[RMDB]
RNA sequence: GGGAACGACUCGAGUAGAGUCGAAAAUUAUCCAGACCCUUCAAGAAUUUUGUCUGCCGGUUGCUUUGUAGAUGAUAUCGUUAAGACUGACGGUACACUCAUGGUAGAGCGGUUUGUGUCUUUGGCUAGAACUUGGGGUUCGCCCCAAGUAAAAGAAACAACAACAACAAC
Reactivity to 2A3 in 0.01 (KOAc 150mM, MgCl2 10mM, bicine 150mM(pH8.5), 24C), signal-to-noise 4, nucleotides 027 to 129: u070u030a050u040c000c010a000g080a070c000c010c010u070u070c080a100a020g050a130a120u100u080u120u200g120u020c030u040g010c030c030g180g030u030u040g000c030u040u030u090g080u210a070g030a190u020g020a100u010a010u010c000g020u020u020a160a040g170a260c160u110g000a000c050g000g010u000a010c000a010c010u010c000a000u020g060g000u040a040g030a050g150c020g020g000u040u160u100g070u000g020u000c000u040u050u030g020g020c030u030a060g020a120
Reactivity to DMS in 0.01 (KOAc 150mM, MgCl2 10mM, bicine 150mM(pH8.5), 24C), signal-to-noise 5, nucleotides 027 to 129: u000u000a080u060c050c000a090g020a130c010c000c010u050u020c090a140a070g030a050a080u010u000u020u020g010u030c040u030g020c000c060g000g000u020u000g010c040u010u020u030g020u120a050g000a120u000g020a110u020a000u000c030g000u010u020a090a120g070a170c220u000g030a020c000g000g000u020a020c080a040c030u030c000a070u000g000g010u000a060g020a060g030c020g000g000u000u050u070g010u040g000u030c030u050u000u030g000g000c080u050a040g000a140